[RMDB]
Chemical mapping of a 177-nucleotide RNA with DMS and 2A3. Values cover nucleotides 27 to 126. Conditions: 150 mM KOAc, 10 mM MgCl2 and 150 mM bicine (pH 8.5), 24 C. For 2A3 the reverse transcriptase was SuperScript II with manganese. Reactivities are rounded to 0.1 and cut off at 0 and 3.

RNA sequence: GGGAACGACUCGAGUAGAGUCGAAAAGCACGUCGUUACGACGACGUGCAAGAAAACAAAAGGAGUGGCGACGCAUGGCCACAGUGAAUCAAACAUGCGAAAAGCAUGGUGGUACGCCACCAUGCAACUCACGUGAUUAGUUCGCUAAUCACGUGAGAAAAGAAACAACAACAACAAC
Reactivity to DMS in 0.01 (KOAc 150mM, MgCl2 10mM, bicine 150mM(pH8.5), 24C), signal-to-noise 2, nucleotides 027 to 126: g040c000a000c020g000u000c000g020u010u060a070c160g050a080c000g040a000c000g000u000g010c000a010a030g000a140a070a180a140c140a070a070a050a200g020g000a070g000u000g000g000c000g000a030c000g000c000a000u000g050g000c000c000a000c020a090g000u060g000a080a040u000c190a030a000a090c020a000u000g000c000g000a170a090a090a080g000c020a000u000g120g040u000g030g030u050a070c230g050c060c000a000c010c000a000u010g040c000a010a010
Reactivity to 2A3 in 0.01 (KOAc 150mM, MgCl2 10mM, bicine 150mM(pH8.5), 24C), signal-to-noise 7, nucleotides 027 to 126: g010c000a000c000g000u000c000g010u010u080a110c300g010a000c000g010a000c010g060u000g010c000a000a010g010a000a050a000a020c170a020a110a050a020g230g090a200g030u010g000g010c030g030a040c000g020c000a000u010g000g000c010c010a000c010a010g060u100g100a020a030u180c070a050a000a040c000a000u010g010c010g050a100a000a000a030g000c000a000u000g000g010u000g010g020u050a020c290g080c050c000a000c010c000a000u000g000c000a000a000